Chemical mapping of a 170-nucleotide RNA with 2A3 and DMS.
RNA sequence: GGGAACGACUCGAGUAGAGUCGAAAAUCCUCCCUCUCCUUCGAGGACGGGUUCGCGACGGGUUGGCUCAUCCUGAGAUCGGGGAGCCUCGACGAUCUCUUUGAUCUCCUGAAGGAGGAAGGAGCUCAGACAGAGUGCUUCGGCACUCUGAAAAGAAACAACAACAACAAC
Reactivity to 2A3 in 0.01 (KOAc 150mM, MgCl2 10mM, bicine 150mM(pH8.5), 24C), signal-to-noise 7, nucleotides 027 to 129: u020c010c000u020c000c000c000u000c000u000c000c000u040u050c030g110a020g020g000a010c030g010g000g000u030u060c050g010c020g110a120c070g060g110g010u130u070g040g010c010u010c020a160u090c040c010u060g020a070g010a120u150c070g010g000g000g000a030g000c000c020u070c030g120a130c030g010a040u000c040u000c000u050u090u120g090a110u030c020u020c020c040u070g030a030a010g000g010a000g010g010a010a020g030g000a030g020c010u040c090a030g020a090
Reactivity to DMS in 0.01 (KOAc 150mM, MgCl2 10mM, bicine 150mM(pH8.5), 24C), signal-to-noise 3, nucleotides 027 to 129: u010c000c020u020c010c020c030u000c020u010c020c050u020u040c060g040a080g040g000a090c120g000g000g050u010u030c000g040c100g000a010c130g000g000g000u040u020g000g010c050u000c000a000u030c040c040u040g030a120g000a070u030c000g000g030g000g020a020g050c060c020u040c060g000a230c080g050a070u020c000u010c060u060u070u040g030a070u030c050u010c010c200u030g030a040a080g030g040a000g050g010a070a090g030g040a050g020c070u030c000a060g030a290
For 2A3 the reverse transcriptase was SuperScript II with manganese. DMS adducts were read by reverse transcription with MarathonRT. Conditions: 150 mM KOAc, 10 mM MgCl2 and 150 mM bicine (pH 8.5), 24 C.